The record gives the reactivity of an RNA of 177 nucleotides to 2A3 and DMS. For DMS, 1,131 sequencing reads were counted.

RNA sequence: GGGAACGACUCGAGUAGAGUCGAAAAUGGCCGGGUGCUGGCACCGGAGGAGCGCCUGACGGUCGAGCAGGCGAUUCGCGCGCAGACCAUCGAUGCCGCCUGGCAACUGUUCGCUGAGGACGCGAUCACAACCCAAGAACUUCGGUUCUUGGGUUGUAAAAGAAACAACAACAACAAC
Reactivity to 2A3 in 0.01 (KOAc 150mM, MgCl2 10mM, bicine 150mM(pH8.5), 24C), signal-to-noise 1, nucleotides 027 to 126: u050g120g020c000c000g010g000g050u080g160c240u170g050g000c000a000c010c040g000g030a070g010g000a040g000c010g000c020c030u040g030a070c060g030g060u150c000g030a130g090c020a020g000g140c030g020a060u090u120c030g020c000g040c030g030c060a020g070a170c000c000a020u060c040g020a020u040g010c020c020g030c000c020u010g000g010c010a030a020c020u040g010u060u030c010g000c060u040g070a110g210g070a060c070g000c010g040a030u070c050
Reactivity to DMS in 0.01 (KOAc 150mM, MgCl2 10mM, bicine 150mM(pH8.5), 24C), signal-to-noise 1, nucleotides 027 to 126: u000g010g000c010c010g040g020g020u000g060c230u010g030g000c020a040c010c020g000g000a130g030g030a100g020c050g040c010c070u020g000a100c080g000g030u040c050g040a270g030c060a050g000g030c030g000a080u000u010c050g020c070g000c030g030c020a110g000a140c030c000a040u000c010g020a090u000g000c000c000g000c000c030u010g050g010c070a110a020c110u010g010u000u000c020g010c010u000g000a230g000g000a120c120g020c010g000a010u000c020